Conditions: 150 mM KOAc, 10 mM MgCl2 and 150 mM bicine (pH 8.5), 24 C. The record gives the reactivity of an RNA of 207 nucleotides to 2A3 and DMS. For 2A3, 1,644 sequencing reads were counted. For DMS the reverse transcriptase was MarathonRT. Reactivities are given for positions 27 through 156.
RNA sequence: GGGAACGACUCGAGUAGAGUCGAAAAAGUGCGCCCGUGCAGCCAUCGCCAAGGCCGAAGGCAAGUGACAUGCGCUCGGAAGGCCGCAACCUGGACGUAUUCAAAGACUGCCCACAAGUCAUGCUAGAGCGCGCCAUUGCUCAGUUAGAUGUGGCGAAAAGCGAUAUAUUUUCGAAUAUAUCGCUUUAAAAGAAACAACAACAACAAC
Reactivity to 2A3 in 0.01 (KOAc 150mM, MgCl2 10mM, bicine 150mM(pH8.5), 24C), signal-to-noise 3, nucleotides 027 to 156: a000g060u040g030c010g010c000c020c010g000u090g050c020a000g000c010c010a060u060c030g020c040c020a080a040g070g000c050c010g060a040a060g000g000c070a040a040g120u080g050a000c020a070u100g030c060g030c010u010c010g070g000a070a070g080g020c060c010g010c010a010a020c000c000u030g000g030a040c020g090u080a090u050u090c090a010a070a030g060a070c010u020g010c000c040c000a090c040a020a070g010u120c020a060u170g030c010u090a060g010a000g030c030g010c010g000c060c010a060u020u080g000c010u040c080a030g040u020u090a010g010a130u070g040u020g020g000c010g010a070
Reactivity to DMS in 0.01 (KOAc 150mM, MgCl2 10mM, bicine 150mM(pH8.5), 24C), signal-to-noise 2, nucleotides 027 to 156: a080g060u000g020c000g020c010c010c010g030u010g030c030a110g140c030c010a090u000c040g010c010c050a100a100g010g000c040c020g010a150a080g000g050c020a020a090g010u010g000a110c050a140u000g020c010g020c030u010c030g020g000a110a090g020g040c040c010g000c090a090a090c050c000u000g000g010a050c020g020u000a080u000u000c090a110a150a150g000a080c030u000g040c000c000c020a060c080a070a090g010u000c020a100u010g000c050u000a120g000a040g030c030g030c030g000c030c010a080u000u000g010c020u000c030a140g010u000u000a060g010a110u000g000u000g010g000c020g000a080